Chemical mapping of a 177-nucleotide RNA with DMS. The DMS profile rests on 1,397 reads.

[RMDB]
RNA sequence: GGGAACGACUCGAGUAGAGUCGAAAAGAUAUGGACCCAGCGAGGAGGUGGGAUUCUGCAGAUUAUGGGUCGGAAACGACCCAUAAUCUGCACUAUCCCACUACCCACCCUCCCUGGGUCCUAAGUCGACAUAAAUGUUCUUCGGAACAUUUAUGUCAAAAGAAACAACAACAACAAC
Reactivity to DMS in 0.01 (KOAc 150mM, MgCl2 10mM, bicine 150mM(pH8.5), 24C), signal-to-noise 2, nucleotides 027 to 126: g000a170u020a300u000g010g000a020c000c000c010a000g010c300g000a030g010g000a160g010g020u010g010g000g000a000u000u000c090u020g030c010a000g000a030u000u000a030u000g000g010g020u000c010g000g000a100a120a300c040g000a020c000c000c010a000u010a000a010u000c000u000g010c000a000c050u000a000u000c000c000c000a000c000u000a020c080c120c200a300c120c000c000u000c000c040c000u010g010g000g020u000c000c000u000a000a080g000u000c060
DMS adducts were read by reverse transcription with MarathonRT.